The data come from the RNA Mapping Database (RMDB), library 15KLIB. This 170-nucleotide RNA was probed chemically with 2A3 and DMS. The 2A3 profile rests on 3,424 reads.
RNA sequence: GGGAACGACUCGAGUAGAGUCGAAAAGACGCGAACCCGUGAGUGGAAACCUCGUUCUUUAUUGGGGAGUACACUCGAGGAGUGGAAGGCGGGGAGGGCGGGGAGGAGUGUUACCCUACGGGAACUGAGAGACAGUGCUUCGGCACUGUCAAAAGAAACAACAACAACAAC
Reactivity to 2A3 in 0.01 (KOAc 150mM, MgCl2 10mM, bicine 150mM(pH8.5), 24C), signal-to-noise 4, nucleotides 027 to 129: g030a020c030g030c040g050a030a020c000c010c000g060u080g020a000g000u020g000g000a000a000a000c000c030u150c100g080u200u100c140u110u280u140a170u120u210g000g020g000g000a000g000u000a010c020a000c030u010c000g000a030g030g010a030g040u090g020g030a080a010g060g030c090g020g000g010g070a250g010g000g040c090g000g010g050g000a080g010g010a050g000u070g020u030u120a100c000c000c000u080a040c090g010g000g050a000a000c000u050g030a060g000a010
Reactivity to DMS in 0.01 (KOAc 150mM, MgCl2 10mM, bicine 150mM(pH8.5), 24C), signal-to-noise 3, nucleotides 027 to 129: g050a190c040g030c130g030a260a070c190c020c050g020u060g070a030g000u000g090g010a140a150a200c030c040u000c160g050u070u050c210u060u010u010a050u120u010g000g000g080g000a040g060u070a110c020a010c000u010c030g020a090g030g000a150g000u030g000g020a010a100g000g030c110g080g010g030g010a220g000g040g060c140g000g000g000g000a010g040g000a240g010u110g000u100u030a210c000c000c080u050a140c230g000g060g000a140a100c000u030g020a090g090a190